RNA sequence: GGGAACGACUCGAGUAGAGUCGAAAAGAUAUGGAUUGUAACGACAUCGAUCUUACUGACUCGGAAACGAGUUUAAGGGAGUCGCCCAAUCCUAAGUCAAAGUAAGUCAUGUUCGCAUGACUUACAAGAAUGAAGCAAGGUUCGCCUUGCUUCAUUCAAAAGAAACAACAACAACAAC
Reactivity to DMS in 0.01 (KOAc 150mM, MgCl2 10mM, bicine 150mM(pH8.5), 24C), signal-to-noise 5, nucleotides 027 to 126: g000a010u000a010u020g000g000a010u000u000g000u010a180a220c020g010a020c010a300u010c240g000a010u010c000u000u000a010c300u010g010a000c000u000c000g010g000a010a010a020c000g010a010g010u000u000u000a010a020g000g000g000a010g020u000c000g020c120c300c000a010a010u000c000c000u010a000a100g000u000c010a130a140a210g000u000a010a010g010u010c000a000u000g010u000u000c300g030c010a010u000g000a010c000u000u000a000c010a100a080
Reactivity to 2A3 in 0.01 (KOAc 150mM, MgCl2 10mM, bicine 150mM(pH8.5), 24C), signal-to-noise 3, nucleotides 027 to 126: g020a000u030a010u070g000g000a000u020u000g040u070a100a040c020g040a000c010a070u300c150g020a010u010c010u010u020a040c090u080g040a010c010u010c000g000g000a000a000a010c010g000a000g000u000u010u010a010a000g010g020g010a020g010u000c010g000c010c010c000a010a010u020c000c000u010a010a000g010u020c030a040a030a060g010u000a000a000g000u000c000a010u020g020u070u130c300g020c180a000u010g000a000c000u020u010a000c000a000a030
Structure probing data (DMS and 2A3) for a 177-nucleotide construct. 2A3 adducts were read by reverse transcription with SuperScript II with manganese. The reactions ran in a buffer of 150 mM KOAc, 10 mM MgCl2 and 150 mM bicine (pH 8.5), at 24 C.